An RNA of 207 nucleotides, treated with 2A3 and DMS and read out base by base.
For DMS, 6,728 sequencing reads were counted.
It was measured as part of the RMDB library OK3TST.
The RNA was probed in 150 mM KOAc, 10 mM MgCl2 and 150 mM bicine (pH 8.5) at 24 C.
DMS adducts were read by reverse transcription with MarathonRT.
High 2A3 reactivity points to a flexible backbone, as in loops and unpaired stretches.
RNA sequence: GGGAACGACUCGAGUAGAGUCGAAAAACUUUUUUGUCUCGUCCAGUGACCCGGCUUCCUAGGAUUAUUCUUCUACUCGGUGAACUGUUGAAAGUAACUCCUGAAGAACAUGCAGACAAGGAAGAUAUACCUGUUCUAAAGGAAAUGCUCGAACGCGAAUCGUUAUGUUAUUCGUAACAUAACGAUUAAAAGAAACAACAACAACAAC
Reactivity to 2A3 in 0.01 (KOAc 150mM, MgCl2 10mM, bicine 150mM(pH8.5), 24C), signal-to-noise 5, nucleotides 027 to 156: a010c040u110u050u020u010u030u100g040u010c030u020c060g050u020c020c040a100g020u060g100a070c030c050c010g040g020c040u080u030c030c040u040a040g020g000a030u030u060a040u170u060c040u050u030c020u020a040c030u010c050g090g000u080g080a130a060c040u060g040u070u060g070a060a080a030g000u050a020a030c060u000c020c000u010g020a030a010g010a030a030c010a040u150g040c050a030g060a110c030a030a030g060g010a050a040g060a040u080a020u040a170c010c030u010g010u050u030c050u070a090a040a000g040g010a040a100a060u090g000c010u040c130g060a070a030c080g020c040g090
Reactivity to DMS in 0.01 (KOAc 150mM, MgCl2 10mM, bicine 150mM(pH8.5), 24C), signal-to-noise 3, nucleotides 027 to 156: a100c040u000u000u000u000u000u000g030u010c020u000c040g000u000c040c010a160g030u000g010a180c150c020c030g030g000c020u000u010c040c010u010a150g020g020a090u000u000a050u000u000c050u010u000c000u000a040c010u000c030g030g020u000g010a140a110c060u000g010u020u010g000a110a040a080g000u000a040a060c100u000c020c030u010g010a300a060g000a050a020c010a030u000g010c040a070g010a150c070a070a060g010g010a080a080g010a140u000a150u000a060c040c010u010g010u000u000c020u000a020a230a050g000g010a030a090a130u000g010c020u010c040g000a050a070c100g010c080g000